[RMDB]
RNA sequence: GGGAACGACUCGAGUAGAGUCGAAAAGUCUCCUCUCGUAAAUACAAGACUCAAAACAAUAGUAACUGCGAACAACAUCGUAAGCUUCAAGCGCGUAGCAGUAGCUGCGUAGAACUCUCUCAUAGAGUCGCUUACCUCUGACCUGACUCCGUUAAGGCAUAUAUCUGGCGUUCGCGCCAGAUAUAUGAAAAGAAACAACAACAACAAC
Reactivity to 2A3 in 0.01 (KOAc 150mM, MgCl2 10mM, bicine 150mM(pH8.5), 24C), signal-to-noise 5, nucleotides 027 to 156: g010u000c010u000c050c010u010c010u030c020g110u090a070a110a070u210a100c080a090a020g050a050c020u050c100a030a070a070a080c060a070a170u100a110g050u050a060a030c040u030g020c020g030a050a020c060a030a010c010a150u090c020g030u050a090a060g020c000u130u110c060a080a050g040c020g000c010g070u030a000g000c000a060g120u100a080g010c020u000g000c010g000u010a030g050a090a030c010u000c000u040c000u010c010a100u080a250g000a010g020u010c020g000c020u040u130a140c010c020u070c040u070g060a060c010c000u020g040a060c030u060c110c030g080u070u100a070a030g030g000
Reactivity to DMS in 0.01 (KOAc 150mM, MgCl2 10mM, bicine 150mM(pH8.5), 24C), signal-to-noise 1, nucleotides 027 to 156: g000u010c000u000c050c070u000c000u000c020g060u000a040a080a160u000a130c060a080a030g010a080c000u000c020a100a080a230a110c050a040a160u000a130g010u000a030a090c020u000g000c000g000a020a110c030a130a190c120a150u000c020g000u000a030a080g040c000u020u010c070a120a160g010c050g000c030g030u000a080g000c000a260g040u010a130g020c000u000g050c050g050u040a150g000a010a040c020u000c030u000c050u000c050a120u000a290g000a030g010u010c030g020c020u000u010a090c030c020u000c080u000g020a060c050c010u010g030a050c090u000c010c030g000u010u000a090a060g000g000
Structure probing data (2A3 and DMS) for a 207-nucleotide construct. High 2A3 reactivity points to a flexible backbone, as in loops and unpaired stretches. Conditions: 150 mM KOAc, 10 mM MgCl2 and 150 mM bicine (pH 8.5), 24 C.